Chemical mapping of a 177-nucleotide RNA with 2A3 and DMS.
[RMDB]
RNA sequence: GGGAACGACUCGAGUAGAGUCGAAAACAUUAUUCAGAAGCUGUUCCCUCAGUAAAUGCGCUGUUUUCCAUCAGGAAAUACAGGCUACCGAAACAUGCGUCUCUAUGCAGGCGACAACCGGGAGGUUCAUUACACUCAUGUUCGCAUGAGUGUAAUGAAAAGAAACAACAACAACAAC
Reactivity to 2A3 in 0.01 (KOAc 150mM, MgCl2 10mM, bicine 150mM(pH8.5), 24C), signal-to-noise 9, nucleotides 027 to 126: c030a060u130u210a130u240u250c070a060g050a180a020g060c030u020g030u020u020c000c000c000u010c020a030g040u070a040a080a090u160g000c210g010c030u010g020u020u000u010u000c050c050a180u220c130a190g000g030a010a010a010u140a030c000a000g010g000c010u020a020c000c010g070a120a160a040c050a040u180g010c000g010u000c010u000c010u090a180u300g040c160a010g010g000c000g060a050c010a020a020c020c010g020g010g010a060g060g000u010u000
Reactivity to DMS in 0.01 (KOAc 150mM, MgCl2 10mM, bicine 150mM(pH8.5), 24C), signal-to-noise 3, nucleotides 027 to 126: c020a090u040u000a040u000u030c050a120g010a140a030g040c050u010g010u000u000c010c000c020u000c080a070g000u000a020a090a090u030g000c010g020c030u000g000u000u010u000u000c000c010a210u030c250a170g000g000a000a000a010u020a000c010a000g020g000c000u010a050c030c020g000a060a100a090c100a120u010g000c010g000u000c010u010c020u040a140u000g000c210a040g000g000c000g000a050c010a070a030c080c010g010g000g000a090g000g010u010u000
It was measured as part of the RMDB libraries RFM100 and RFMREP.
Values are in units of 0.01, from 0 to 300, in steps of 10.
For 2A3 the reverse transcriptase was SuperScript II with manganese.
DMS (dimethyl sulfate) methylates the pairing face of unpaired adenines and cytosines.